[RMDB]
RNA sequence: GGGAACGACUCGAGUAGAGUCGAAAACAUUUGUUUGUUAAGGCAUCAUAUCGGGAUGAUCUUAUGCUGACUAGCCCAUAUUUGGAUGAAAAAGCAGCAAAAAAGUGCGUUGUACCUAUCUUUAUUGCAUAUUAAGGAACUUCGGUUCCUUAAUAUGAAAAGAAACAACAACAACAAC
Reactivity to DMS in 0.01 (KOAc 150mM, MgCl2 10mM, bicine 150mM(pH8.5), 24C), signal-to-noise 6, nucleotides 027 to 126: c040a070u000u000u000g010u000u000u000g010u000u000a100a110g000g000c020a030u000c020a070u000a100u010c170g010g000g010a060u000g000a070u000c030u000u000a080u010g020c060u010g000a060c070u000a160g010c070c010c010a050u000a090u000u000u010g010g010a070u010g000a050a070a070a100a060g010c020a080g010c040a000a020a060a070a050a060g010u000g010c090g000u000u000g010u010a090c060c060u000a100u000c070u000u000u000a080u030u010g010
Reactivity to 2A3 in 0.01 (KOAc 150mM, MgCl2 10mM, bicine 150mM(pH8.5), 24C), signal-to-noise 2, nucleotides 027 to 126: c020a040u060u110u140g160u190u150u020g070u040u090a080a040g020g040c000a030u020c020a040u090a040u210c050g090g020g040a040u070g050a020u040c020u010u080a080u100g010c030u000g030a100c040u020a030g040c020c000c000a000u020a090u100u150u090g070g020a050u010g020a030a030a000a020a030g000c000a020g000c000a010a020a040a000a040a040g100u070g030c040g020u020u070g030u030a020c000c000u040a070u110c040u070u150u040a130u070u180g010